RNA sequence: GGGAACGACUCGAGUAGAGUCGAAAACGCCUGCAACGGUGAAUAGUAAGAGAUUUAAGCCCCAGGGAGUGGGGCAAUCUGAAUAUGAGUGUGUCGGCAGAAAUGGACAUUAUCUUUGAGGAAUAUGCUAUGGACGUAUUUUCGAAUACGUCCAUAGAAAAGAAACAACAACAACAAC
Reactivity to DMS in 0.01 (KOAc 150mM, MgCl2 10mM, bicine 150mM(pH8.5), 24C), signal-to-noise 3, nucleotides 027 to 126: c220g040c050c000u010g000c160a110a060c070g000g010u010g010a100a080u000a070g010u010a090a120g000a060g010a080u010u000u000a120a160g020c000c000c000c000a020g010g020g000a130g050u010g020g030g000g020c010a010a010u000c020u010g000a120a110u010a050u000g000a070g020u010g000u000g020u000c060g000g000c070a060g010a030a080a100u010g000g000a030c040a070u020u000a060u000c050u000u010u000g000a100g010g010a100a160u010a070u000g010
Reactivity to 2A3 in 0.01 (KOAc 150mM, MgCl2 10mM, bicine 150mM(pH8.5), 24C), signal-to-noise 2, nucleotides 027 to 126: c060g030c020c070u090g000c060a020a040c030g000g000u100g060a120a110u080a050g100u090a090a040g010a020g000a060u090u120u040a180a030g050c030c020c030c030a020g150g120g050a210g240u030g000g010g000g000c000a000a010u020c000u000g020a030a010u080a030u200g030a050g030u050g020u000g000u030c020g040g000c060a020g050a010a110a030u150g040g010a000c020a050u010u100a040u100c000u080u110u070g040a090g040g120a120a070u160a050u190g080
Conditions: 150 mM KOAc, 10 mM MgCl2 and 150 mM bicine (pH 8.5), 24 C.
The record gives the reactivity of an RNA of 177 nucleotides to DMS and 2A3.
Reactivities are given for positions 27 through 126.
DMS adducts were read by reverse transcription with MarathonRT.
The 2A3 profile rests on 1,090 reads.
DMS (dimethyl sulfate) methylates the pairing face of unpaired adenines and cytosines.